[RMDB]
RNA sequence: GGGAACGACUCGAGUAGAGUCGAAAAAAGAUAUGGACGUACUAUGGGAAGGUGGAGGCUUGGAUUUAGCAAUCGGAAACGAUUGCUUGUCAGCCUUGUUACAGCCCAUAGGUACGUCCUAAGUCAAGUUAUUUUCCAAGUUCGCUUGGAAAAUAACAAAAGAAACAACAACAACAAC
Reactivity to 2A3 in 0.01 (KOAc 150mM, MgCl2 10mM, bicine 150mM(pH8.5), 24C), signal-to-noise 4, nucleotides 027 to 126: a010a000g080a020u090a050u170g000g010a010c010g000u020a010c000u010a000u000g010g000g040a030a100g220g050u220g160g030a010g020g030c060u180u240g210g000a030u300u240u100a020g000c000a000a000u010c010g060g000a080a030a020c010g000a010u010u000g000c010u000u010g000u010c010a000g010c000c020u010u020g130u190u120a020c020a020g070c010c010c000a000u000a010g020g000u000a000c000g000u010c000c010u000a000a000g020u000c000a110a050
Reactivity to DMS in 0.01 (KOAc 150mM, MgCl2 10mM, bicine 150mM(pH8.5), 24C), signal-to-noise 3, nucleotides 027 to 126: a100a080g010a050u010a300u010g000g000a020c000g020u000a000c000u000a010u010g010g010g000a050a060g000g000u010g000g000a010g010g010c010u000u000g020g020a010u000u010u000a000g020c010a000a010u010c000g020g000a120a110a170c000g010a010u000u000g000c010u000u010g000u000c000a050g000c000c020u000u000g000u010u010a040c040a160g010c010c000c000a000u010a010g010g000u000a010c010g010u010c000c000u000a000a100g010u000c040a110a130

Source information:
An RNA of 177 nucleotides, treated with 2A3 and DMS and read out base by base. It was measured as part of the RMDB library TTRDES. The RNA was probed in 150 mM KOAc, 10 mM MgCl2 and 150 mM bicine (pH 8.5) at 24 C. For 2A3 the reverse transcriptase was SuperScript II with manganese.